[RMDB]
Source: RMDB library OK2TRN, as collected in RNAgym. The record gives the reactivity of an RNA of 177 nucleotides to DMS and 2A3. Conditions: 150 mM KOAc, 10 mM MgCl2 and 150 mM bicine (pH 8.5), 24 C.
RNA sequence: GGGAACGACUCGAGUAGAGUCGAAAAAUGGCUACAUGCUAGAGGAUCCUAGGUGUACAUGGUCGCUAGCAUGUCGCUAGAGAUCUAGCACAUGCACGAUCUCAUGUGAUGCAUCAGGUACGUACGCUAGUACCUGUGUGUUCGCACACAGGUACUAAAAAGAAACAACAACAACAAC
Reactivity to DMS in 0.01 (KOAc 150mM, MgCl2 10mM, bicine 150mM(pH8.5), 24C), signal-to-noise 7, nucleotides 027 to 126: a100u010g000g020c020u000a040c070a060u000g010c020u000a040g000a110g010g010a070u000c010c050u000a150g010g010u010g010u010a060c050a070u000g010g000u000c010g010c080u000a060g010c000a010u000g010u000c150g020c010u000a030g000a200g000a060u000c010u000a230g000c010a090c110a030u010g010c030a130c150g000a020u000c030u000c070a060u000g010u000g000a090u010g000c050a040u000c050a050g010g010u000a060c070g010u000a070c130g030c130
Reactivity to 2A3 in 0.01 (KOAc 150mM, MgCl2 10mM, bicine 150mM(pH8.5), 24C), signal-to-noise 4, nucleotides 027 to 126: a000u090g010g010c000u020a030c050a060u080g020c020u020a030g000a050g170g000a050u070c010c020u060a090g080g020u140g050u080a070c040a060u090g000g000u000c000g000c070u020a010g000c000a000u010g000u000c000g000c000u020a030g000a000g000a060u070c010u030a020g000c010a050c020a160u200g000c020a010c080g030a040u010c050u010c040a020u060g050u070g070a120u130g000c010a040u030c030a040g070g000u070a060c040g040u010a010c080g000c100